Structure probing data (DMS and 2A3) for a 177-nucleotide construct. Reactivities are given for positions 27 through 126. The reactions ran in a buffer of 150 mM KOAc, 10 mM MgCl2 and 150 mM bicine (pH 8.5), at 24 C. For 2A3, 20,985 sequencing reads were counted. The DMS profile rests on 20,907 reads. It was measured as part of the RMDB library OK2TRN.
[RMDB]
RNA sequence: GGGAACGACUCGAGUAGAGUCGAAAAAGGACACCGACCUGUGGACUGAGUUCGCGGAAAAACCAGUAAGGUUGUCGCCCGGCCAAAUCGAAGAGUAUGUCUUUCAUCUACAAGGGGCCAAGGCCAACAUUCAAUAUCUUUUCGAAGAUAUUGAAUGAAAAGAAACAACAACAACAAC
Reactivity to DMS in 0.01 (KOAc 150mM, MgCl2 10mM, bicine 150mM(pH8.5), 24C), signal-to-noise 9, nucleotides 027 to 126: a040g010g010a050c020a060c060c040g000a130c210c020u000g020u000g020g010a090c040u010g000a140g010u000u000c080g030c090g000g000a050a070a070a070a040c060c020a060g010u010a100a120g000g010u000u010g020u000c060g010c020c010c020g010g000c030c030a030a070a070u000c080g000a070a060g010a080g010u000a050u000g010u000c050u000u000u000c070a060u000c060u000a060c120a060a110g010g000g000g010c060c050a080a090g010g010c030c050a070a200
Reactivity to 2A3 in 0.01 (KOAc 150mM, MgCl2 10mM, bicine 150mM(pH8.5), 24C), signal-to-noise 9, nucleotides 027 to 126: a000g040g000a010c010a010c020c010g040a060c010c020u060g020u070g080g050a040c050u090g040a050g150u100u090c060g010c090g120g010a080a100a020a020a050c020c000a010g030u070a080a090g050g010u050u110g010u020c010g000c010c010c000g010g010c010c020a050a070a070u120c050g060a070a010g030a040g090u160a100u140g070u030c030u030u140u080c030a080u020c010u070a080c030a110a080g070g000g030g000c030c020a050a020g050g010c000c020a040a030